[RMDB]
RNA sequence: GGGAACGACUCGAGUAGAGUCGAAAAAAGAAGACAAAAUUGAAAUGCCAGCUUUUAUGAUGAACAAUCAAUUAGCAGUAUCAAUGUUAGCAGCUUAAUUCCUCGCUGUUAGAGGAUCGCUAGCCGUAAUAGUAGUUAAUUGUAGAUUAUUAACUAUGGAUAUGUACUAGUUCGCUAGUACAUAUCCAAAAGAAACAACAACAACAAC
Reactivity to DMS in 0.01 (KOAc 150mM, MgCl2 10mM, bicine 150mM(pH8.5), 24C), signal-to-noise 2, nucleotides 027 to 156: a070a090g020a120a070g040a150c010a040a030a070a050u010u020g010a100a120a140u000g020c000c020a120g040c000u010u010u010u000a040u030g050a040u030g000a110a070c070a070a140u000c010a010a060u000u000a030g040c030a200g000u010a070u020c020a030a070u000g020u000u010a080g030c030a100g000c070u000u010a040a150u010u000c010c020u000c040g000c130u020g020u000u010a060g000a070g030g050a030u000c090g050c070u000a050g080c010c040g020u000a030a070u000a110g010u000a030g000u000u000a000a030u000u000g000u020a110g000a210u000u000a020u010u000a010a040c010u000a130u000
Reactivity to 2A3 in 0.01 (KOAc 150mM, MgCl2 10mM, bicine 150mM(pH8.5), 24C), signal-to-noise 4, nucleotides 027 to 156: a000a000g100a020a030g060a020c060a020a130a090a080u110u120g020a070a040a070u100g020c030c020a050g000c070u130u030u040u070a150u120g030a000u020g020a040a020c030a100a040u040c000a010a030u030u020a000g010c010a010g020u040a030u130c040a050a050u080g030u080u120a000g010c020a000g010c020u070u110a040a020u150u030c010c000u010c000g020c060u060g070u260u070a040g010a010g030g000a010u090c050g030c020u020a020g020c030c030g040u070a060a070u040a150g060u000a010g010u010u010a000a030u030u050g030u040a070g030a140u060u030a010u060u020a130a020c010u010a050u130
Conditions: 150 mM KOAc, 10 mM MgCl2 and 150 mM bicine (pH 8.5), 24 C.
Structure probing data (DMS and 2A3) for a 207-nucleotide construct.
The 2A3 profile rests on 2,767 reads.
In probing experiments dimethyl sulfate is read out at A N1 and C N3, which are open when not base-paired.
For 2A3 the reverse transcriptase was SuperScript II with manganese.